[RMDB]
RNA sequence: GGGAACGACUCGAGUAGAGUCGAAAAUGAAAAGAUUAAUGAGCUUAUCCAAAGUGGAGUAAAUGUAAGGCUUGUAAUCGUUGACUCACUUAUGGCUCACUUCAGAGCAGAAUAUGUAGGAAGGGAAAUAUAUGACGGACUUCGGUCCGUCAUAUAUAAAAGAAACAACAACAACAAC
Reactivity to DMS in 0.01 (KOAc 150mM, MgCl2 10mM, bicine 150mM(pH8.5), 24C), signal-to-noise 3, nucleotides 027 to 126: u000g010a080a060a060a110g010a060u010u020a060a100u020g020a010g000c010u010u010a110u020c040c060a070a100a130g020u030g000g000a040g010u030a100a030a050u020g060u050a140a090g000g000c080u000u010g000u000a070a010u000c020g010u000u010g010a080c040u000c110a050c040u010u020a090u020g010g000c000u010c010a070c170u020u050c210a050g000a050g020c030a090g000a100a020u030a060u020g010u000a030g020g000a050a050g000g000g020a060a070
Reactivity to 2A3 in 0.01 (KOAc 150mM, MgCl2 10mM, bicine 150mM(pH8.5), 24C), signal-to-noise 2, nucleotides 027 to 126: u080g050a010a000a000a090g010a030u000u120a080a140u110g000a000g000c000u020u140a070u130c000c000a160a210a120g100u190g120g020a050g080u150a030a080a200u170g070u180a160a060g060g000c060u010u020g010u110a020a000u070c030g010u030u130g060a000c000u050c010a000c010u190u150a150u210g000g050c030u040c040a080c060u060u140c080a010g040a010g030c040a000g030a010a080u100a010u200g030u120a050g060g050a080a020g000g000g070a170a090
About this RNA:
This 177-nucleotide RNA was probed chemically with DMS and 2A3. For 2A3, 831 sequencing reads were counted. For 2A3 the reverse transcriptase was SuperScript II with manganese. For DMS the reverse transcriptase was MarathonRT.